[RMDB]
RNA sequence: GGGAACGACUCGAGUAGAGUCGAAAAGAUAUGGACUCCCAUGAGGUGGAUUGGGAGACAUGUUGAUGAGUCGGAAACGACUCACCAACAACAGCUCCGCAAUCCACCUCAUGGGAGUCCUAAGUCACAUUAAUUCGAUGUUCGCAUCGAAUUAAUGAAAAGAAACAACAACAACAAC
Reactivity to DMS in 0.01 (KOAc 150mM, MgCl2 10mM, bicine 150mM(pH8.5), 24C), signal-to-noise 2, nucleotides 027 to 126: g010a040u000a300u000g000g010a010c000u000c020c000c010a030u000g000a030g000g040u000g010g020a000u000u000g000g020g000a030g020a020c100a100u000g010u010u000g010a010u000g000a020g000u000c020g000g000a140a130a300c000g000a020c000u000c000a010c010c010a000a020c000a020a060c290a180g000c000u000c010c020g010c020a010a010u000c000c000a000c010c000u000c000a000u000g000g000g000a000g000u000c000c000u000a000a070g000u000c050a300